[RMDB]
RNA sequence: GGGAACGACUCGAGUAGAGUCGAAAAUUUUGGACAGCAGUAUUAGUAAAGUGUAAGAAAAUUGUCAAAGCUUGGAGCUAUGCUUGUUGAACUUUUGUACCAAUAGCACCUUUACCAGAGGCUGCGUUCUAUAGCGAAAGUUCGCUUUCGCUAUAGAAAAAGAAACAACAACAACAAC
Reactivity to DMS in 0.01 (KOAc 150mM, MgCl2 10mM, bicine 150mM(pH8.5), 24C), signal-to-noise 2, nucleotides 027 to 126: u020u000u020u010g030g020a200c060a110g030c010a030g020u010a100u020u000a050g000u000a050a030a050g000u000g000u000a070a180g030a130a070a060a040u010u000g030u000c020a060a050a060g010c030u000u000g010g010a120g000c050u000a020u000g020c030u000u010g010u010u030g000a050a080c040u000u000u010u010g040u010a100c150c100a060a020u000a070g000c040a050c020c030u000u000u000a050c130c110a060g000a120g000g000c100u000g010c030g000u000
Reactivity to 2A3 in 0.01 (KOAc 150mM, MgCl2 10mM, bicine 150mM(pH8.5), 24C), signal-to-noise 1, nucleotides 027 to 126: u040u040u060u060g020g040a020c020a010g000c000a010g010u050a010u150u080a080g000u020a030a060a030g040u060g080u140a120a040g020a060a050a100a170u170u050g090u030c000a020a010a000g000c010u020u030g130g010a030g030c030u050a030u110g010c030u140u110g020u070u090g040a040a000c000u050u070u040u130g100u100a060c010c000a110a010u000a030g020c000a020c010c030u040u060u070a060c030c030a010g020a020g130g060c050u000g000c010g000u020
Conditions: 150 mM KOAc, 10 mM MgCl2 and 150 mM bicine (pH 8.5), 24 C. An RNA of 177 nucleotides, treated with DMS and 2A3 and read out base by base. The 2A3 profile rests on 871 reads. Reactivities are given for positions 27 through 126. Source: RMDB library RFMREP, as collected in RNAgym. For 2A3 the reverse transcriptase was SuperScript II with manganese.